This 177-nucleotide RNA was probed chemically with 2A3. Reactivities are rounded to 0.1 and cut off at 0 and 3. The 2A3 profile rests on 609 reads.
[RMDB]
RNA sequence: GGGAACGACUCGAGUAGAGUCGAAAACAGCAAUUGUAUUGCUAAAACAAAUGUAUUGCUGCAUUUGGUUACCGUCAGACAUAUUUUUCAGAAAUUGCGCGUAAAUUUUUCGCACUUAAAGAAUAUAAGGUCGAUACUACUUCGGUAGUAUCGACCUAAAAGAAACAACAACAACAAC
Reactivity to 2A3 in 0.01 (KOAc 150mM, MgCl2 10mM, bicine 150mM(pH8.5), 24C), signal-to-noise 2, nucleotides 027 to 126: c090a010g010c020a010a000u160u120g150u220a160u060u020g030c000u080a190a020a020a000c010a000a000a000u020g020u100a060u040u300g230c210u050g000c000a000u000u010u020g110g020u080u060a120c050c030g040u040c110a020g010a090c020a010u060a020u030u120u000u000u120c120a020g060a040a120a000u010u060g000c010g000c000g010u070a080a000a300u220u140u010u000u070c050g000c000a070c010u040u080a110a090a000g030a170a080u060a010u010a050